RNA sequence: GGGAACGACUCGAGUAGAGUCGAAAAAAAAAAAGAUAUGGAUCGUAGGGAGUACGACAUGGCUAUGAAGUCGGAAACGAUGGAGCCAUGAAUCGUACAUCGAUCUACGAUCCUAAGUCAAAAAAAACAUUAUGUUGGAGUUCGCUCCAACAUAAUGAAAAGAAACAACAACAACAAC
Reactivity to 2A3 in 0.01 (KOAc 150mM, MgCl2 10mM, bicine 150mM(pH8.5), 24C), signal-to-noise 1, nucleotides 027 to 126: a000a020a010a000a020a020a110g070a050u110a060u140g020g000a000u000c010g010u000a000g010g000g050a040g020u000a000c010g000a000c010a000u000g010g000c000u040a140u300g020a070a010g000u020c010g020g020a070a030a020c000g000a000u030g000g030a000g000c000c020a000u000g010a020a020u010c000g000u020a000c000a060u080c020g000a020u020c000u010a000c000g000a000u000c000c010u000a030a020g000u000c010a050a120a120a090a020a010a000a000
Reactivity to DMS in 0.01 (KOAc 150mM, MgCl2 10mM, bicine 150mM(pH8.5), 24C), signal-to-noise 1, nucleotides 027 to 126: a000a000a050a020a010a060a090g000a010u010a300u010g000g000a000u010c000g000u000a000g020g000g000a020g000u000a000c010g010a030c010a000u000g000g000c020u010a220u000g010a070a090g010u010c000g000g000a070a080a130c010g000a000u000g000g000a000g030c000c000a000u000g000a060a040u000c000g020u020a000c010a120u000c150g000a060u000c010u000a010c000g000a000u000c000c000u000a000a060g000u010c010a000a000a000a020a050a040a060a140